[RMDB]
RNA sequence: GGGAACGACUCGAGUAGAGUCGAAAAGGGCGCUCCCCUCGGACCUCCGUCGAGGGGGUUCACAUCCCCAACCCGCGGGCCGGCUACUCUUCUUUCCCUUCUCUCGUCUUCCUCGGUCAACCUUCGAUACGGCUGUGGUUCGCCACAGCCAAAAGAAACAACAACAACAAC
Reactivity to DMS in 0.01 (KOAc 150mM, MgCl2 10mM, bicine 150mM(pH8.5), 24C), signal-to-noise 2, nucleotides 027 to 129: g000g000g050c120g020c100u070c000c000c000c000u000c080g030g030a060c050c090u040c000c100g030u080c080g000a270g000g000g000g000g000u020u000c060a130c200a170u060c010c060c000c020a000a000c110c050c030g020c040g000g000g000c040c060g010g020c070u070a050c000u000c050u000u000c000u000u000u010c070c000c000u040u040c070u010c000u010c030g030u030c010u050u130c000c030u030c050g030g050u090c100a100a090c020c020u020u030c090g000a030u030a110c110
Reactivity to 2A3 in 0.01 (KOAc 150mM, MgCl2 10mM, bicine 150mM(pH8.5), 24C), signal-to-noise 3, nucleotides 027 to 129: g020g040g000c040g010c040u100c000c000c000c000u000c030g020g020a030c000c050u050c030c040g030u080c080g050a170g000g040g000g010g010u000u000c000a010c010a050u050c000c000c000c020a020a050c000c000c000g040c020g000g000g020c000c050g010g010c010u050a030c000u010c000u120u030c000u010u060u040c000c000c000u050u010c010u030c000u020c000g030u010c000u070u040c010c000u000c010g000g000u030c040a040a060c010c000u100u120c030g060a030u020a190c020